[RMDB]
RNA sequence: GGGAACGACUCGAGUAGAGUCGAAAAGGAACGCGGAGUUGGAAACUGCUUCGAAGUCGUACCUGUCUCCAGGCAUCUUUCCGGUCACCGAGAGCAUCUUCUCUUCGUCCAGGUAGCAGAGGCACUCUUCGUAACCCAGUUCGUAGCCUCGAGUAUCAAGUACGACCUAAUUCGUUAGGUCGUACUUAAAAGAAACAACAACAACAAC
Reactivity to 2A3 in 0.01 (KOAc 150mM, MgCl2 10mM, bicine 150mM(pH8.5), 24C), signal-to-noise 3, nucleotides 027 to 156: g040g020a100a000c020g010c040g040g030a030g030u100u090g030g020a100a060a070c050u070g020c000u110u100c050g050a110a020g050u040c020g000u030a050c000c000u010g040u040c040u030c040c010a020g030g040c010a050u050c090u020u140u050c080c050g000g000u040c060a050c070c030g020a020g000a000g050c030a110u050c050u150u000c030u010c000u060u090c000g030u020c020c010a020g010g070u050a020g010c090a010g020a030g030g000c020a050c030u000c000u050u020c040g050u020a080a090c000c020c000a040g020u050u090c040g040u060a040g030c000c000u010c020g000a040g000u070a080u240c060
Reactivity to DMS in 0.01 (KOAc 150mM, MgCl2 10mM, bicine 150mM(pH8.5), 24C), signal-to-noise 3, nucleotides 027 to 156: g030g000a100a020c040g000c070g020g000a160g000u020u000g010g030a140a090a130c020u010g010c030u000u000c040g030a060a100g020u010c020g030u000a080c050c030u000g020u010c010u000c000c010a090g010g020c020a100u010c030u000u000u010c060c090g030g020u000c050a100c050c010g000a060g000a070g020c070a110u010c050u030u010c020u000c010u010u000c080g030u000c140c060a150g030g060u000a060g020c050a100g020a080g000g060c230a080c030u000c050u000u000c090g000u000a090a130c010c000c030a150g010u000u000c070g010u000a130g000c030c000u000c030g000a090g020u010a120u010c150

This 207-nucleotide RNA was probed chemically with 2A3 and DMS.
The RNA was probed in 150 mM KOAc, 10 mM MgCl2 and 150 mM bicine (pH 8.5) at 24 C.
The 2A3 profile rests on 2,233 reads.
Reactivities are given for positions 27 through 156.